The record gives the reactivity of an RNA of 177 nucleotides to DMS and 2A3.
Reactivities are rounded to 0.1 and cut off at 0 and 3.
The RNA was probed in 150 mM KOAc, 10 mM MgCl2 and 150 mM bicine (pH 8.5) at 24 C.
RNA sequence: GGGAACGACUCGAGUAGAGUCGAAAAGAUAUGGAGAGGUAAGAAAUGUGCUGAUAUUCGGAAACGAAUACAGCGAAUCUUACUACCCACCUCCUAAGUCAAACGACGUAGCUUCGGCUACGUCGAAGACAUUGUGGCAGUUCGCUGCCACAAUGUCAAAAGAAACAACAACAACAAC
Reactivity to DMS in 0.01 (KOAc 150mM, MgCl2 10mM, bicine 150mM(pH8.5), 24C), signal-to-noise 1, nucleotides 027 to 126: g000a080u020a060u010g020g010a070g010a160g020g010u000a000a000g000a050a100a110u000g050u000g050c000u000g010a170u000a020u000u000c000g000g010a070a090a100c010g010a030a000u000a000c000a020g030c000g000a110a030u020c000u000u030a000c010u000a160c060c110c030a300c180c000u000c020c000u000a070a080g000u000c030a070a070a270c020g020a000c010g020u000a010g000c000u000u000c210g000g010c000u000a000c000g000u000c000g000a010a080
Reactivity to 2A3 in 0.01 (KOAc 150mM, MgCl2 10mM, bicine 150mM(pH8.5), 24C), signal-to-noise 1, nucleotides 027 to 126: g030a020u180a080u160g020g000a000g000a040g050g000u010a030a040g020a070a300a160u300g100u170g060c000u010g010a300u000a010u050u030c000g000g080a000a130a000c010g010a010a000u010a000c010a000g010c040g000a010a000u000c000u000u010a010c000u110a140c000c030c010a120c000c040u090c010c030u100a150a060g110u100c100a120a070a130c050g010a000c000g000u010a010g030c030u030u150c300g090g000c000u000a000c000g000u030c000g010a000a000
Overview: DMS (dimethyl sulfate) methylates the pairing face of unpaired adenines and cytosines.